[RMDB]
RNA sequence: GGGAACGACUCGAGUAGAGUCGAAAACCGGAGUAGUUCGCUACUCCGGAAAUAAAUUCAGCGGUAAUUCGAGCGCAAAUAUUACCGCUGAUGCGGUCGAAAAAACUGCCAAGUUCGCUUGGCAGAACAUCUAAGAUUUCUUCGGAAAUCUUAGAUGAAAAGAAACAACAACAACAAC
Reactivity to 2A3 in 0.01 (KOAc 150mM, MgCl2 10mM, bicine 150mM(pH8.5), 24C), signal-to-noise 3, nucleotides 027 to 126: c000c000g000g000a000g000u010a010g000u040u130c210g000c110u000a000c000u000c000c000g000g000a000a000a020u040a010a100a020u070u010c000a000g000c000g030g010u010a020a010u050u130c150g110a130g130c140g050c150a070a100a060u180a020u020u010a010c010c010g000c000u000g000a000u000g020c040g050g060u170c050g000a100a040a020a020a110a130c010u000g000c010c000a010a010g010u040u070c180g030c120u000u010g000g000c000a000g000a010a000
Reactivity to DMS in 0.01 (KOAc 150mM, MgCl2 10mM, bicine 150mM(pH8.5), 24C), signal-to-noise 4, nucleotides 027 to 126: c000c000g010g000a010g020u000a010g020u000u010c170g020c000u010a000c000u000c000c000g010g010a000a030a040u000a040a060a100u010u000c000a010g010c010g000g010u000a000a020u000u000c170g020a140g010c140g000c130a060a090a060u000a030u000u010a000c010c000g000c000u010g000a000u000g000c140g000g000u010c070g000a000a060a060a090a100a170c010u000g010c000c000a010a010g000u000u010c220g010c000u000u000g000g000c000a000g000a070a120
Source: RMDB library M2PK50, as collected in RNAgym. Chemical mapping of a 177-nucleotide RNA with 2A3 and DMS. For 2A3, 4,621 sequencing reads were counted. The reactions ran in a buffer of 150 mM KOAc, 10 mM MgCl2 and 150 mM bicine (pH 8.5), at 24 C. 2A3 adducts were read by reverse transcription with SuperScript II with manganese.